[RMDB]
RNA sequence: GGGAACGACUCGAGUAGAGUCGAAAAGAUAUGGACGCCGUUGCUUUUGACGUCUUUGCGUCGGAAACGACGUUUGGACGAUAAGCAACGCGUCCUAAGUCAAAACUAUAUACUUCGGUAUAUAGAACUAGUAAAACGUGUUCGCACGUUUUACUAGAAAAGAAACAACAACAACAAC
Reactivity to DMS in 0.01 (KOAc 150mM, MgCl2 10mM, bicine 150mM(pH8.5), 24C), signal-to-noise 4, nucleotides 027 to 126: g020a030u000a190u000g000g000a000c000g020c180c160g010u000u000g010c000u000u000u000u020g020a190c140g000u000c000u010u000u000g010c000g020u000c010g010g000a040a020a080c000g020a010c000g020u000u000u000g010g010a020c000g020a110u000a010a010g010c010a010a010c010g010c010g000u000c000c000u000a010a080g010u000c000a170a080a130a250c010u010a010u000a010u000a000c000u000u010c220g030g010u000a010u000a000u000a010g000a090a290
Reactivity to 2A3 in 0.01 (KOAc 150mM, MgCl2 10mM, bicine 150mM(pH8.5), 24C), signal-to-noise 5, nucleotides 027 to 126: g010a010u050a020u090g000g000a010c020g110c210c160g020u000u000g010c040u170u170u210u300g300a300c100g000u000c000u010u000u020g010c000g010u000c000g000g010a030a030a010c010g000a010c000g020u000u010u040g020g000a010c020g100a140u110a240a010g000c000a010a000c010g000c000g000u000c000c000u000a010a010g010u010c020a000a020a120a180c000u000a000u010a000u000a030c010u030u090c300g140g000u010a000u010a000u000a020g020a050a130